Chemical mapping of a 177-nucleotide RNA with 2A3 and DMS.
Source: RMDB library OK2TST, as collected in RNAgym.
The reactions ran in a buffer of 150 mM KOAc, 10 mM MgCl2 and 150 mM bicine (pH 8.5), at 24 C.
RNA sequence: GGGAACGACUCGAGUAGAGUCGAAAAGACACUCCACGUGGAGGGGUUCGUAUCACCCCUUCCCCUGACAGUCUCAUGAUAGGGGACUACUUGGUCAUCACACCUCAGGCUGUACUCCAAAAUGAGAGACACCCGUAUCAUUCGUGAUACGGGUGUCAAAAGAAACAACAACAACAAC
Reactivity to 2A3 in 0.01 (KOAc 150mM, MgCl2 10mM, bicine 150mM(pH8.5), 24C), signal-to-noise 2, nucleotides 027 to 126: g050a010c010a020c100u070c010c030a070c060g100u090g030g030a000g000g010g000g000u010u130c160g000u200a140u200c040a090c000c010c010c000u000u030c000c010c000c040u010g050a040c020a040g080u000c010u000c040a070u090g090a110u170a090g050g020g000g030a000c000u020a060c020u030u070g080g020u000c010a030u040c010a130c030a050c070c000u030c030a060g120g000c040u030g040u060a160c020u010c020c050a050a070a030a070u120g020a070g010a010
Reactivity to DMS in 0.01 (KOAc 150mM, MgCl2 10mM, bicine 150mM(pH8.5), 24C), signal-to-noise 1, nucleotides 027 to 126: g000a160c090a050c050u010c050c030a090c180g000u000g000g000a010g000g000g000g000u000u000c140g000u030a120u020c150a100c020c000c000c010u010u010c000c010c000c030u010g020a100c190a090g020u000c010u020c020a030u000g030a060u000a200g020g010g020g000a030c060u010a090c060u020u000g000g010u010c020a090u000c160a150c100a080c100c050u010c030a040g020g020c070u010g050u030a090c030u010c050c070a040a040a100a060u000g010a120g000a200